[RMDB]
RNA sequence: GGGAACGACUCGAGUAGAGUCGAAAACAUUAUCAAGUAAUUGAGUGGUGUGAAUAGUACCAUCUGAUAAUUUUUCUAAUCUGAAUAACAUGUCAGAUGCAUAUAUUAUGAAACCAUCCUUCCAAGUACUAACCCAUUCCAAAGUUCUUGUAGGUAGGGCUAGAUCUAGUUUCGACUAGAUCUAGCCAAAAGAAACAACAACAACAAC
Reactivity to 2A3 in 0.01 (KOAc 150mM, MgCl2 10mM, bicine 150mM(pH8.5), 24C), signal-to-noise 2, nucleotides 027 to 156: c020a040u140u170a050u290c000a030a040g070u120a180a110u100u050g040a020g010u030g020g000u050g000u020g140a060a090u040a050g000u010a040c080c000a000u020c030u000g000a000u000a130a100u060u040u040u010u000c060u090a160a300u140c100u100g020a060a010u080a080a030c030a090u120g000u000c000a010g000a000u010g000c030a030u120a050u040a040u230u170a070u170g030a020a010a000c050c010a020u070c000c050u070u090c060c030a000a000g020u000a040c020u000a000a090c000c000c000a020u160u000c040c060a110a120a010g050u090u060c020u060u040g030u040a090g000g050u090a050g060
Chemical mapping of a 207-nucleotide RNA with 2A3.